The record gives the reactivity of an RNA of 177 nucleotides to DMS and 2A3. Values cover nucleotides 27 to 126. For DMS, 16,275 sequencing reads were counted. The 2A3 profile rests on 17,427 reads. Values are in units of 0.01, from 0 to 300, in steps of 10. Conditions: 150 mM KOAc, 10 mM MgCl2 and 150 mM bicine (pH 8.5), 24 C.
RNA sequence: GGGAACGACUCGAGUAGAGUCGAAAAUGCAAUUAGUUCGCUAAUUGCACAUGUCUAGUCGCUAGAAAACGAUCAAAACUAGCGACUUGACUUUAUUGAUCGGGGGCCUGGCUUUCGAGCCAGGCAACUUAGUGUAAAGUUUCGACUUUACACUAAGAAAAGAAACAACAACAACAAC
Reactivity to DMS in 0.01 (KOAc 150mM, MgCl2 10mM, bicine 150mM(pH8.5), 24C), signal-to-noise 7, nucleotides 027 to 126: u000g000c000a010a000u000u000a010g020u000u010c250g020c010u000a000a000u000u000g010c000a020c100a060u000g000u000c020u000a010g010u000c000g010c000u000a000g000a050a020a040a070c050g010a030u000c010a040a100a160a140c000u000a000g000c010g000a000c000u000u000g010a080c120u000u010u000a050u010u000g000a010u000c000g010g010g000g000g010c000c010u000g000g010c000u000u000u010c160g010a020g010c000c000a000g010g000c020a000a010
Reactivity to 2A3 in 0.01 (KOAc 150mM, MgCl2 10mM, bicine 150mM(pH8.5), 24C), signal-to-noise 5, nucleotides 027 to 126: u050g000c000a000a010u000u000a010g010u030u050c160g000c120u000a000a010u010u010g060c010a010c020a040u090g000u000c010u010a000g000u000c000g000c000u000a010g050a090a190a030a060c100g060a110u120c050a030a030a010a130c000u000a000g020c030g000a000c000u000u010g000a000c000u040u120u070a150u050u110g080a070u110c050g020g010g010g040g000c010c000u000g010g000c000u050u060u060c110g000a000g000c000c000a000g010g000c000a000a000